[RMDB]
RNA sequence: GGGAACGACUCGAGUAGAGUCGAAAAAUAUUUCAAGACCUGAUAUCACUUUAACAUCUAAAGGUUCUCUUGGCACAAGUAACAAAGUUUCCUAUAGUAUCGCUGGCUAUAAUAUGGAUAUUAAUAGUCCUAUGCAUCAAUUCAUGUUAGAUGAAUGCAACAGCUUUUGAUUCGUCAAAAGCUGUUGAAAAGAAACAACAACAACAAC
Reactivity to 2A3 in 0.01 (KOAc 150mM, MgCl2 10mM, bicine 150mM(pH8.5), 24C), signal-to-noise 3, nucleotides 027 to 156: a000u060a070u040u180u140c050a030a030g020a080c000c020u040g040a060u090a050u190c080a110c080u140u090u150a190a040c070a110u150c060u130a150a030a030g030g000u090u000c070u000c000u080u080g020g050c010a050c030a070a060g060u110a200a010c060a180a160a030g020u010u030u070c010c010u080a060u020a160g040u020a030u120c060g000c040u030g020g000c020u030a010u020a160a060u050a070u170g060g000a010u010a020u160u110a090a110u050a130g010u030c030c000u020a030u120g050c020a060u000c070a050a040u050u000c020a010u030g050u060u070a110g030a070u080g040a090a090u120g040
Reactivity to DMS in 0.01 (KOAc 150mM, MgCl2 10mM, bicine 150mM(pH8.5), 24C), signal-to-noise 1, nucleotides 027 to 156: a100u000a090u010u000u010c030a040a150g020a120c010c020u000g000a160u010a090u000c040a130c040u000u000u000a060a130c050a090u000c030u000a020a100a050g010g000u010u000c030u000c050u000u030g030g010c100a080c090a040a140g000u010a060a060c070a100a070a140g030u000u000u000c030c010u010a120u000a100g020u000a070u010c040g010c070u000g000g000c000u000a040u000a020a080u020a100u000g000g010a080u010a040u000u010a080a100u020a110g020u050c030c040u000a080u000g000c020a070u000c030a040a070u000u010c000a020u000g000u000u010a060g010a100u000g000a060a060u010g000

Structure probing data (2A3 and DMS) for a 207-nucleotide construct.
The 2A3 profile rests on 962 reads.
2A3 adducts were read by reverse transcription with SuperScript II with manganese.
Values cover nucleotides 27 to 156.
Source: RMDB library OK3TST, as collected in RNAgym.